Structure probing data (2A3 and DMS) for a 177-nucleotide construct. Conditions: 150 mM KOAc, 10 mM MgCl2 and 150 mM bicine (pH 8.5), 24 C.

[RMDB]
RNA sequence: GGGAACGACUCGAGUAGAGUCGAAAACACGAACGUUGGCUAAUCCUGGUCGGACAUCAGGAGGUUAGUGCACUGGCAUAAGCCAGCUUGGCGCUAAUAGAUACUAAUCGUAGCAUAGCUGAAUAAAGCGAUUUACGUAGUUCGCUACGUAAAUCGCAAAAGAAACAACAACAACAAC
Reactivity to 2A3 in 0.01 (KOAc 150mM, MgCl2 10mM, bicine 150mM(pH8.5), 24C), signal-to-noise 2, nucleotides 027 to 126: c020a010c020g090a130a000c110g010u040u170g010g000c050u040a040a170u000c000c000u000g020g010u030c080g040g070a030c000a060u000c000a000g000g000a040g030g000u000u010a000g000u000g020c010a000c000u010g000g000c020a100u050a300a030g000c000c000a020g010c020u040u150g110g010c010g000c000u000a000a000u050a110g110a040u070a010c060u160a190a050u060c010g040u020a000g000c030a080u100a010g020c020u070g060a180a040u230a140a070a010
Reactivity to DMS in 0.01 (KOAc 150mM, MgCl2 10mM, bicine 150mM(pH8.5), 24C), signal-to-noise 1, nucleotides 027 to 126: c080a240c160g000a000a020c060g000u010u000g020g030c120u000a000a060u000c000c000u070g010g060u000c210g000g000a300c080a000u000c000a020g070g000a020g050g000u000u000a000g000u000g100c100a160c010u000g000g020c000a170u000a000a250g010c000c000a070g040c210u040u000g040g000c000g000c000u000a000a000u000a010g000a140u000a030c000u000a050a180u000c200g000u000a040g000c120a110u000a000g000c060u030g000a000a030u060a090a100a110
Reactivities are given for positions 27 through 126.
2A3 adducts were read by reverse transcription with SuperScript II with manganese.